[RMDB]
RNA sequence: GGGAACGACUCGAGUAGAGUCGAAAAUCGCGUUUCGACGCGAAAAAGGGGUCUAACUUAACGAGGGUAAGACAUGCUCUGAAGCCUCCACGGAGCAACAGCUUACCUCCCCACCGUUUGGUUAGACGGAGGCACCCAAAAGGGCGAUUCGUCGCCCGCUUAAACCUCCUUUCGAGGAGGUUUAAGCAAAAGAAACAACAACAACAAC
Reactivity to DMS in 0.01 (KOAc 150mM, MgCl2 10mM, bicine 150mM(pH8.5), 24C), signal-to-noise 2, nucleotides 027 to 156: u010c000g030c010g010u000u000u010c300g020a100c010g030c000g000a000a030a030a130a100g020g020g000g000u000c000u000a000a030c010u010u000a020a030c000g000a300g010g010g020u000a020a010g010a120c060a300u000g010c000u000c000u000g010a070a140g040c000c000u010c010c010a300c030g000g010a040g000c010a100a110c050a090g000c020u000u000a030c000c060u000c300c020c030c100a300c110c000g000u000u010u000g000g030u000u010a010g020a040c030g000g050a040g040g030c000a080c040c010c030a020a080a100a130g030g030g030c010g010a110u010u000c190g000u010c010g000c000c000c000
Reactivity to 2A3 in 0.01 (KOAc 150mM, MgCl2 10mM, bicine 150mM(pH8.5), 24C), signal-to-noise 3, nucleotides 027 to 156: u020c000g000c010g010u040u090u100c220g080a030c010g030c030g050a090a030a000a000a010g110g000g010g000u000c000u000a000a000c000u010u020a000a000c010g010a060g000g000g030u010a000a010g040a050c080a190u240g000c010u000c000u010g030a080a020g000c000c000u000c000c010a000c010g010g000a000g010c010a050a040c060a070g170c000u000u010a000c000c000u040c030c020c010c010a050c000c000g000u000u000u020g020g000u000u000a000g000a000c010g000g000a010g000g000c000a030c000c000c010a050a130a030a040g010g000g010c020g000a010u050u070c100g040u010c000g120c000c000c000